[RMDB]
RNA sequence: GGGAACGACUCGAGUAGAGUCGAAAAAUCUGGAAUCGGCCAAGUGCAAGUGUUUGUCUAGUACGGAUAAAAAGUGGCGGAUAGCGAAGCCCAUGUCGAAUCCGGUACGUAAUCGCGCGUCAGGAACGUACCUGAGACCUUCUCGUGCGUCACCGCGCUAGUUCUCCAUCUUCGGAUGGAGAACUAGAAAAGAAACAACAACAACAAC
Reactivity to 2A3 in 0.01 (KOAc 150mM, MgCl2 10mM, bicine 150mM(pH8.5), 24C), signal-to-noise 2, nucleotides 027 to 156: a000u070c080u150g020g010a030a030u050c030g040g000c050c000a100a120g000u030g120c060a090a080g010u000g020u140u150u080g000u000c010u000a040g080u020a020c020g000g080a040u160a180a230a020a020a000g030u060g050g010c010g000g040a020u050a030g050c020g050a050a010g020c050c000c000a030u170g020u050c020g030a030a050u010c020c000g030g010u000a020c000g000u020a170a000u070c080g000c060g010c030g290u040c100a040g050g050a100a050c010g020u020a010c000c050u060g030a060g010a050c020c000u080u040c040u000c000g060u050g040c010g000u010c010a070c040c030g040c010g000
Reactivity to DMS in 0.01 (KOAc 150mM, MgCl2 10mM, bicine 150mM(pH8.5), 24C), signal-to-noise 2, nucleotides 027 to 156: a100u010c050u000g010g020a120a080u000c050g020g050c030c030a080a110g020u020g000c040a060a180g060u000g020u000u000u010g010u000c010u000a090g010u000a240c010g000g010a160u010a030a080a020a090a170g040u000g020g000c040g020g020a100u000a100g030c140g020a060a210g000c040c000c020a110u000g010u010c040g070a060a110u000c000c000g050g030u000a000c050g040u000a080a130u010c070g020c010g020c050g010u000c060a120g030g000a050a040c040g030u000a010c020c020u060g000a100g000a110c130c030u010u000c010u000c040g010u000g010c050g030u010c030a190c170c010g040c090g000